[RMDB]
Chemical mapping of a 177-nucleotide RNA with 2A3 and DMS. DMS adducts were read by reverse transcription with MarathonRT. Reactivities are rounded to 0.1 and cut off at 0 and 3. The 2A3 profile rests on 2,148 reads. The RNA was probed in 150 mM KOAc, 10 mM MgCl2 and 150 mM bicine (pH 8.5) at 24 C. It was measured as part of the RMDB library OK2TRN. For DMS, 3,110 sequencing reads were counted.
RNA sequence: GGGAACGACUCGAGUAGAGUCGAAAAUUGAGCAUCCAGAAGGUGGACUGGAGCCGAGUGCGGCGGCGGUUGAAGAGAUCACAGCCGCUGUUGAGGCCGCAGCCCAACCGGCACGGCAAAGACCAGCCAACACCUAAGGUUUCGACCUUAGGUGUUGAAAAGAAACAACAACAACAAC
Reactivity to 2A3 in 0.01 (KOAc 150mM, MgCl2 10mM, bicine 150mM(pH8.5), 24C), signal-to-noise 2, nucleotides 027 to 126: u040u070g060a050g000c010a090u000c010c040a020g020a070a030g110g050u060g010g030a100c000u030g000g050a030g010c010c010g040a070g110u160g040c050g000g000c000g000g030c030g000g020u060u080g060a160a060g170a040g030a190u140c060a040c020a070g020c000c030g000c000u000g030u000u080g020a040g070g020c000c020g000c010a060g000c000c000c000a020a130c060c050g020g000c040a020c060g000g040c000a080a080a000g060a080c020c010a020g130c070
Reactivity to DMS in 0.01 (KOAc 150mM, MgCl2 10mM, bicine 150mM(pH8.5), 24C), signal-to-noise 3, nucleotides 027 to 126: u000u010g000a110g030c040a180u000c010c020a040g010a190a090g000g000u010g000g020a120c010u010g010g000a100g000c010c020g010a150g000u010g010c000g020g010c000g010g020c010g000g020u000u000g010a060a140g010a160g000a150u000c070a150c030a060g000c010c000g000c010u000g010u010u000g010a160g000g000c000c010g020c030a080g000c000c010c010a040a150c150c000g000g000c020a180c080g010g010c060a040a070a100g000a100c050c030a100g000c100